Chemical mapping of a 177-nucleotide RNA with DMS and 2A3. In probing experiments dimethyl sulfate is read out at A N1 and C N3, which are open when not base-paired. For 2A3 the reverse transcriptase was SuperScript II with manganese. For 2A3, 1,213 sequencing reads were counted. The reactions ran in a buffer of 150 mM KOAc, 10 mM MgCl2 and 150 mM bicine (pH 8.5), at 24 C. The DMS profile rests on 1,301 reads.
[RMDB]
RNA sequence: GGGAACGACUCGAGUAGAGUCGAAAAGCUACAGAAUAGUGAGUGGAAGUGUGGCUACUCUAUGCCUCCACUUUACAAGAUCCAGAGCAUGGUUUUGGCCCCAUGUAGUCUUUACAACUAUGGCAAGCUUCCCUUGCAGAUUCGUCUGCAAGGGAAGAAAAGAAACAACAACAACAAC
Reactivity to DMS in 0.01 (KOAc 150mM, MgCl2 10mM, bicine 150mM(pH8.5), 24C), signal-to-noise 2, nucleotides 027 to 126: g010c010u010a010c070a050g000a030a030u000a050g030u000g000a030g030u010g000g000a060a010g040u020g010u000g000g020c300u010a070c250u020c030u010a050u000g020c020c020u000c020c040a000c000u000u020u040a020c030a110a090g000a050u000c020c060a100g020a110g010c090a110u000g010g000u000u000u000u000g000g000c030c010c020c040a130u010g000u000a000g000u010c010u020u010u010a080c180a050a090c080u000a090u000g000g020c180a080a070g010
Reactivity to 2A3 in 0.01 (KOAc 150mM, MgCl2 10mM, bicine 150mM(pH8.5), 24C), signal-to-noise 1, nucleotides 027 to 126: g000c010u030a040c020a030g060a140a050u170a080g130u110g050a020g010u030g000g070a040a040g020u040g010u020g100g000c090u090a070c060u120c020u090a070u110g000c000c000u020c020c000a000c000u020u110u060a040c020a050a020g030a060u040c010c030a010g010a020g130c100a080u060g090g000u070u060u050u040g020g040c040c040c000c000a040u060g010u010a040g030u080c010u030u080u130a060c050a110a040c020u110a070u130g110g000c060a070a010g010